The record gives the reactivity of an RNA of 207 nucleotides to 2A3 and DMS. The RNA was probed in 150 mM KOAc, 10 mM MgCl2 and 150 mM bicine (pH 8.5) at 24 C.
RNA sequence: GGGAACGACUCGAGUAGAGUCGAAAAAAUGGUGUCAUACCACUUUGUUAUAAGCUUGGUGGUGGUGACAGAGUAACCUUUGGUGAGGAUGAAAUCAAAGAAAUUCCAGCACGCAAUAACGUCAAACUUAUUUUUGAGUUUGAGAAUGAUGUUAUUGGAUAAUGACGGUCUUCGGACCGUCAUUAUCAAAAGAAACAACAACAACAAC
Reactivity to 2A3 in 0.01 (KOAc 150mM, MgCl2 10mM, bicine 150mM(pH8.5), 24C), signal-to-noise 4, nucleotides 027 to 156: a000a000u260g070g000u070g000u000c000a010u020a030c010c000a000c000u060u020u010g060u070u150a290u080a300a050g030c030u030u020g000g000u000g000g000u030g010g080u000g000a010c010a000g020a010g020u070a020a130c030c000u020u020u070g020g000u020g030a040g090g040a050u120g080a100a090a030u070c030a060a030a010g050a050a120a010u080u010c020c040a070g010c100a050c130g090c010a020a000u030a010a010c010g010u000c000a010a010a040c010u020u030a110u140u200u100u210u250g110a130g080u070u080u080g050a040g040a040a060u060g030a000u030g020u000u010a000u020u030g030
Reactivity to DMS in 0.01 (KOAc 150mM, MgCl2 10mM, bicine 150mM(pH8.5), 24C), signal-to-noise 1, nucleotides 027 to 156: a030a040u000g000g000u000g100u000c010a040u000a060c000c010a010c000u000u010u020g030u000u010a170u000a060a210g030c000u000u010g000g030u000g010g040u000g040g040u000g030a030c030a040g000a190g050u000a160a090c060c010u010u000u000g010g010u000g000a140g000g010a230u000g020a070a110a050u000c050a060a080a080g000a040a040a080u010u000c010c040a140g000c060a130c110g030c030a040a050u010a010a000c010g040u000c020a030a020a230c000u000u000a170u000u000u000u020u000g030a150g030u010u000u000g000a080g010a020a180u000g000a040u000g000u000u000a030u010u010g010
Overview
It was measured as part of the RMDB library OK3TST.